[RMDB]
RNA sequence: GGGAACGACUCGAGUAGAGUCGAAAACAGAAAAUGCAAAGUUGGACUGAAAAUAUCCCAAGUCUUCUAAGCAAUCUGCUUAAGGCUUCCAAACUUACCUUAAUUUGGUAAGAAAAUAAGCUGCCCUAAGCCAUCUGCUAUUCGUAGCAGAUGGCUUAAAAGAAACAACAACAACAAC
Reactivity to 2A3 in 0.01 (KOAc 150mM, MgCl2 10mM, bicine 150mM(pH8.5), 24C), signal-to-noise 2, nucleotides 027 to 126: c060a000g130a020a100a050a030u090g000c000a090a040a000g030u060u160g060g030a010c000u000g030a060a040a250a150u240a160u180c060c010c020a000a000g000u010c000u030u000c030u100a030a000g000c000a000a120u060c010u010g090c080u030u010a000a040g060g070c000u120u000c040c080a060a040a050c020u010u000a000c020c020u150u160a180a070u150u160u100g000g000u000a010a000g090a040a190a010a010u160a010a000g030c010u000g030c000c000c000u010
Structure probing data (2A3) for a 177-nucleotide construct. Source: RMDB library RFM100, as collected in RNAgym. Conditions: 150 mM KOAc, 10 mM MgCl2 and 150 mM bicine (pH 8.5), 24 C. Reactivities are given for positions 27 through 126. The 2A3 profile rests on 497 reads.